[RMDB]
An RNA of 177 nucleotides, treated with DMS and 2A3 and read out base by base.
The data come from the RNA Mapping Database (RMDB), library OK2TRN.
The DMS profile rests on 869 reads.
RNA sequence: GGGAACGACUCGAGUAGAGUCGAAAAGUCGCCGCGUCUACAUCAACGCCCAGCGCGGGCGAGGGAUGCGUCCUACGGGGGUGCCCCAUUCGCCGGCAUGGCAGAGGACGGCAAGAUUGCCGCGACGGCUCGUGCUAGUAUUCGUACUAGCACGAGCAAAAGAAACAACAACAACAAC
Reactivity to DMS in 0.01 (KOAc 150mM, MgCl2 10mM, bicine 150mM(pH8.5), 24C), signal-to-noise 1, nucleotides 027 to 126: g030u000c020g040c000c180g010c030g000u000c030u020a200c110a090u000c020a140a100c010g010c000c030c090a210g000c170g000c130g000g000g000c000g020a050g000g020g060a060u010g000c020g000u010c000c000u050a080c180g020g030g010g040g010u000g000c010c000c000c070a210u010u010c050g030c000c040g000g000c050a160u020g010g000c020a210g000a250g020g000a060c020g000g010c080a060a080g000a090u010u010g060c040c130g000c000g000a030c000g050
Reactivity to 2A3 in 0.01 (KOAc 150mM, MgCl2 10mM, bicine 150mM(pH8.5), 24C), signal-to-noise 2, nucleotides 027 to 126: g000u010c000g000c010c010g040c000g010u000c010u050a100c020a050u020c030a080a030c010g030c000c010c040a060g180c300g080c130g210g010g000c000g000a060g070g090g000a060u120g040c010g020u020c010c000u010a090c120g080g000g000g010g230u130g080c000c000c010c010a100u040u100c050g000c020c000g110g070c100a100u080g020g000c020a020g010a030g110g010a020c030g010g000c020a030a000g010a050u180u300g000c010c010g000c030g000a000c000g050